[RMDB]
RNA sequence: GGGAACGACUCGAGUAGAGUCGAAAAAUUGCAUUACCUUGCACUUUAUCUAACUCAUGUGCUGCAUUCGCAAUUGCAUUAUCAUAAUUUGCUUUCAAAUUGUCAUCUGCAUUGAUGUAAUUUGUGCCUAGUUACGGAAUUUCGAUUCCGUAACUAGAAAAGAAACAACAACAACAAC
Reactivity to DMS in 0.01 (KOAc 150mM, MgCl2 10mM, bicine 150mM(pH8.5), 24C), signal-to-noise 9, nucleotides 027 to 126: a040u000u000g010c020a050u000u000a110c160c130u000u010g010c010a030c060u000u010u010a070u010c110u020a090a110c170u000c100a080u010g010u000g010c080u000g000c050a050u000u000c220g010c060a030a030u010u010g000c040a030u000u010a070u010c160a070u010a060a080u000u000u000g010c140u010u010u000c060a020a020a040u000u000g010u010c060a020u000c130u010g010c210a070u010u000g010a020u000g000u000a020a020u000u000u000g010u000g010c100
Reactivity to 2A3 in 0.01 (KOAc 150mM, MgCl2 10mM, bicine 150mM(pH8.5), 24C), signal-to-noise 9, nucleotides 027 to 126: a000u050u050g000c010a020u040u100a120c030c000u030u060g010c010a020c020u100u130u110a160u060c100u080a090a080c030u040c100a060u100g010u030g020c010u010g000c020a040u090u080c080g000c040a010a070u040u060g000c020a030u060u120a070u210c060a030u040a260a120u090u070u100g020c010u060u190u100c030a040a030a030u020u040g100u090c010a020u010c030u080g130c070a130u050u140g010a010u010g010u010a010a020u000u010u020g030u010g000c000